[RMDB]
RNA sequence: GGGAACGACUCGAGUAGAGUCGAAAAAAGAAACACCAUCAUAUGAAUCUCAAAUUAAAGAGUUAGAUGAUACACCACUUGCUAAAAGAGAUAUCAAAAUUACUGAAGACACCUUCAAUGCAUUAACCAGUGCUGUUAGAUUCGUCUAACAGCACUGAAAAGAAACAACAACAACAAC
Reactivity to 2A3 in 0.01 (KOAc 150mM, MgCl2 10mM, bicine 150mM(pH8.5), 24C), signal-to-noise 1, nucleotides 027 to 126: a020a020g060a070a130a030c060a010c030c010a020u060c040a000u080a060u250g080a110a060u050c020u050c060a160a210a220u120u250a200a090a000g120a010g040u020u060a070g010a060u070g010a040u060a040c030a030c080c040a060c000u030u060g040c000u030a010a000a140a000g040a030g000a030u040a060u100c020a090a060a030a030u140u090a040c050u040g030a040a030g050a040c010a060c150c010u000u000c080a040a100u080g010c000a040u000u070a020a060c060
Reactivity to DMS in 0.01 (KOAc 150mM, MgCl2 10mM, bicine 150mM(pH8.5), 24C), signal-to-noise 1, nucleotides 027 to 126: a000a160g010a130a130a110c060a040c000c030a080u010c060a050u000a080u000g000a100a050u000c010u010c060a040a090a110u000u000a030a070a120g000a010g000u060u000a000g000a060u000g000a150u000a060c050a020c020c110a060c050u010u000g020c200u000a040a060a010a100g000a050g000a050u000a080u000c030a040a000a040a080u040u030a110c170u000g010a050a090g000a130c240a000c240c010u000u000c030a090a040u000g000c030a060u000u000a010a040c230

Chemical mapping of a 177-nucleotide RNA with 2A3 and DMS.
For 2A3 the reverse transcriptase was SuperScript II with manganese.